[RMDB]
RNA sequence: GGGAACGACUCGAGUAGAGUCGAAAAUCAUGCCUGUUCGCAGGCAUGAAAAUAAAUUCAGGGGUAAUUGCUCCGCAAAUAUUACCGCUGAUGCGGAGCAAAAAACAUGAAUCUUCGGAUUCAUGAAUCAUGCCUAUUUGUUCGCAAAUAGGCAUGAAAAAGAAACAACAACAACAAC
Reactivity to DMS in 0.01 (KOAc 150mM, MgCl2 10mM, bicine 150mM(pH8.5), 24C), signal-to-noise 2, nucleotides 027 to 126: u000c000a000u000g020c000c000u000g000u000u020c120g020c010a000g000g000c000a000u000g000a000a050a080a090u000a070a070a090u000u010c050a100g000g000g000g020u000a090a120u000u010g020c020u010c020c060g010c000a020a030a160u000a070u000u020a070c090c100g020c180u000g020a130u000g020c030g000g000a020g000c020a000a030a030a080a020a070c010a000u000g000a010a000u000c000u000u000c230g040g000a010u000u000c000a000u000g000a060a080
The record gives the reactivity of an RNA of 177 nucleotides to DMS. For DMS, 1,478 sequencing reads were counted. It was measured as part of the RMDB library M2PK50. The RNA was probed in 150 mM KOAc, 10 mM MgCl2 and 150 mM bicine (pH 8.5) at 24 C.